[RMDB]
RNA sequence: GGGAACGACUCGAGUAGAGUCGAAAAAUCGAUAAUUCUUCAAUAUCUUCAGAGGUUCUUCUUCCCUCGGGCUUACGUGGAGCGAUAGCGAUCAGAACGAGGAUGCUUGAAUUGGGUAUCCUACCCACGAUAUCCCAUGGUUCGCCAUGGGAUAUCGAAAAGAAACAACAACAACAAC
Reactivity to DMS in 0.01 (KOAc 150mM, MgCl2 10mM, bicine 150mM(pH8.5), 24C), signal-to-noise 2, nucleotides 027 to 126: a040u010c130g010a040u010a050a110u000u000c030u000u010c010a080a060u010a040u000c030u020u000c080a110g020a070g020g000u000u000c070u000u000c080u000u010c030c010c010u000c090g020g000g020c070u000u000a060c100g010u010g010g010a060g000c130g000a110u000a080g010c070g000a080u010c030a070g020a080a080c210g010a060g010g020a050u000g010c040u000u000g010a060a090u010u010g010g010g000u000a020u000c020c010u000a170c010c000c010a130
Reactivity to 2A3 in 0.01 (KOAc 150mM, MgCl2 10mM, bicine 150mM(pH8.5), 24C), signal-to-noise 1, nucleotides 027 to 126: a010u040c000g000a010u110a170a070u210u000c000u060u060c010a050a070u030a080u160c060u090u110c090a050g000a040g020g020u040u020c030u160u010c000u050u080c010c000c000u020c000g020g030g020c000u040u010a050c070g050u030g080g040a000g050c030g060a070u080a030g040c000g020a070u030c040a040g050a050a010c080g010a020g000g010a020u030g030c000u080u030g070a180a200u210u140g030g010g000u010a010u030c020c030u030a030c000c030c010a000
An RNA of 177 nucleotides, treated with DMS and 2A3 and read out base by base. For DMS, 1,692 sequencing reads were counted. The reactions ran in a buffer of 150 mM KOAc, 10 mM MgCl2 and 150 mM bicine (pH 8.5), at 24 C.